RNA sequence: GGGAACGACUCGAGUAGAGUCGAAAAAGCCGCCGGAUAUCGAUGUGGACUUCGAGCACGAGCGGCGCGAGGAGGUGAUCCAGUGGAUCUAUCGAACCUAUACCAGAGAAAAGGCAGCGCUCUGCGCCACUGAUAUCAGGUUCGCCUGAUAUCAGUGAAAAGAAACAACAACAACAAC
Reactivity to DMS in 0.01 (KOAc 150mM, MgCl2 10mM, bicine 150mM(pH8.5), 24C), signal-to-noise 8, nucleotides 027 to 126: a130g000c010c000g010c000c000g000g000a110u030a060u010c010g010a020u000g000u020g030g000a130c140u010u000c010g010a020g000c190a120c020g010a110g000c000g020g000c010g010c110g010a060g000g000a150g000g000u000g000a020u020c010c010a220g010u050g000g010a030u000c010u020a030u010c020g010a150a080c020c000u000a070u020a230c070c010a120g010a130g010a060a060a060a090g000g010c070a090g000c040g020c040u040c080u030g000c040g000c080
Reactivity to 2A3 in 0.01 (KOAc 150mM, MgCl2 10mM, bicine 150mM(pH8.5), 24C), signal-to-noise 9, nucleotides 027 to 126: a000g020c010c000g000c010c010g030g020a120u110a050u240c010g010a020u050g100u270g240g120a150c100u030u010c010g020a030g020c080a020c070g050a080g020c010g010g000c010g000c030g020a040g010g030a010g000g040u050g010a020u020c010c030a070g100u180g170g010a020u000c030u060a030u060c100g070a060a070c010c010u050a060u060a120c010c040a040g030a010g050a120a100a030a010g100g010c060a040g000c040g010c030u090c100u300g020c020g010c000